Chemical mapping of a 207-nucleotide RNA with DMS and 2A3. The DMS profile rests on 1,958 reads. Conditions: 150 mM KOAc, 10 mM MgCl2 and 150 mM bicine (pH 8.5), 24 C.
RNA sequence: GGGAACGACUCGAGUAGAGUCGAAAACAGCGAGAAGGAGUGUAUGAGUGUGAGUGUGUGUGCAUGGAAGUUGGGGCACUGGGCGUCUGACUCCCUCCCCACCCAAGAGAGGAAGGACCCCUCACCACCCCCACUGGUGAGACAGUUUACUUUGCCAGGCAAUUCAUAAAUUCGUUUAUGAAUUGCCAAAAGAAACAACAACAACAAC
Reactivity to DMS in 0.01 (KOAc 150mM, MgCl2 10mM, bicine 150mM(pH8.5), 24C), signal-to-noise 1, nucleotides 027 to 156: c070a110g040c030g000a150g010a130a040g010g000a070g030u000g040u000a040u010g000a160g030u020g010u000g020a110g030u000g050u000g020u000g040u000g040c010a110u020g020g030a080a090g000u000u010g000g010g050g040c120a120c080u000g030g000g050c040g000u010c060u020g020a260c100u020c020c010c010u010c000c010c010c000a110c070c070c040a080a130g000a050g000a050g040g060a160a140g100g000a110c000c030c030c020u000c010a050c020c020a070c040c000c010c010c000a120c240u000g000g020u010g000a050g020a070c060a080g000u020u000u000a130c060u000u000u010g000c070c030a120
Reactivity to 2A3 in 0.01 (KOAc 150mM, MgCl2 10mM, bicine 150mM(pH8.5), 24C), signal-to-noise 2, nucleotides 027 to 156: c030a020g050c020g050a080g020a070a010g030g040a070g020u040g010u040a130u210g040a070g040u120g030u000g040a070g010u050g010u010g000u020g050u030g020c010a050u050g030g040a080a090g030u030u060g030g010g000g000c110a050c190u020g030g000g040c110g070u050c110u090g030a130c040u040c030c000c000u020c030c010c030c020a110c020c000c000a040a000g030a000g000a000g020g000a020a000g020g000a040c000c010c010c020u010c020a040c010c010a020c050c000c000c030c000a000c000u020g020g010u010g030a000g010a000c000a010g000u010u000u040a090c020u060u040u040g100c040c020a020